[RMDB]
Source: RMDB library OK2TST, as collected in RNAgym. The record gives the reactivity of an RNA of 177 nucleotides to DMS and 2A3. The DMS profile rests on 14,067 reads.
RNA sequence: GGGAACGACUCGAGUAGAGUCGAAAAACAGCUCCACCACCACCCCCUCCCCGUGGAACCGCCAUCCCCGCUUCACCUUCCGUACCAGGAACGAACACCCCAGGUAAUCGAGGAGGGACCUCAAGGCUAAAUAUUACGUUUUCGAACGUAAUAUUUAAAAAGAAACAACAACAACAAC
Reactivity to DMS in 0.01 (KOAc 150mM, MgCl2 10mM, bicine 150mM(pH8.5), 24C), signal-to-noise 9, nucleotides 027 to 126: a090c070a100g000c060u010c030c020a050c030c020a080c040c040a230c040c010c010c000c010u010c010c000c010c030g030u000g000g000a070a070c070c050g010c030c030a100u000c030c010c020c060g000c080u000u000c060a090c030c020u000u000c010c020g020u000a050c040c030a100g000g010a060a060c100g000a070a080c160a100c100c030c010c020a070g010g010u000a050a090u010c060g010a090g010g000a090g010g000g010a110c070c020u000c070a060a080g010g010c110
Reactivity to 2A3 in 0.01 (KOAc 150mM, MgCl2 10mM, bicine 150mM(pH8.5), 24C), signal-to-noise 1, nucleotides 027 to 126: a020c020a030g010c020u030c010c010a030c020c010a030c010c000a020c020c020c030c030c010u000c000c000c000c000g010u030g030g010a060a070c010c010g000c040c000a040u050c020c000c000c020g030c000u060u070c030a090c010c000u050u030c020c000g000u020a040c000c020a020g040g000a070a030c040g020a060a010c050a080c030c000c000c020a010g000g000u050a090a040u080c030g010a020g050g010a010g000g010g030a020c010c010u060c040a050a010g070g000c010